An RNA of 177 nucleotides, treated with DMS and 2A3 and read out base by base. The reactions ran in a buffer of 150 mM KOAc, 10 mM MgCl2 and 150 mM bicine (pH 8.5), at 24 C. Reactivities are given for positions 27 through 126. It was measured as part of the RMDB library OK1LIB. For DMS the reverse transcriptase was MarathonRT. 2A3 adducts were read by reverse transcription with SuperScript II with manganese.

RNA sequence: GGGAACGACUCGAGUAGAGUCGAAAAGAAUAAAUCCCUCCCUCCCAAACGCGCGCAAAUAAAAGGAGGGCAACAGGGAUGAGUAGGCUGAGAGGCCAUAACCCGAAAGCGCGCGACGGGGCAAGAACCCUAGUAUCACGUUCGCGUGAUACUAGGGAAAAGAAACAACAACAACAAC
Reactivity to DMS in 0.01 (KOAc 150mM, MgCl2 10mM, bicine 150mM(pH8.5), 24C), signal-to-noise 3, nucleotides 027 to 126: g030a300a150u040a000a180a010u000c000c000c000u000c000c000c010u010c010c000c180a000a260a170c090g000c000g000c060g010c060a140a020a050u050a030a000a300a030g000g000a000g000g080g010c300a000a050c080a010g000g000g000a010u000g000a100g030u070a080g000g000c000u000g000a190g000a180g010g010c000c000a300u000a020a230c000c010c000g000a100a220a150g000c010g000c000g050c000g030a240c040g000g000g000g000c120a050a050g000a030a040
Reactivity to 2A3 in 0.01 (KOAc 150mM, MgCl2 10mM, bicine 150mM(pH8.5), 24C), signal-to-noise 2, nucleotides 027 to 126: g100a020a040u160a140a050a010u030c000c000c010u000c010c010c000u050c000c000c030a080a150a060c020g010c000g010c000g000c040a100a140a080u190a070a210a070a000g010g000a030g000g000g000c000a020a080c070a010g000g000g010a000u040g000a000g140u170a100g020g000c000u010g030a010g000a020g080g000c000c010a020u050a090a100c010c020c000g010a010a030a000g010c030g000c000g000c000g000a000c010g010g000g000g040c040a050a040g020a200a130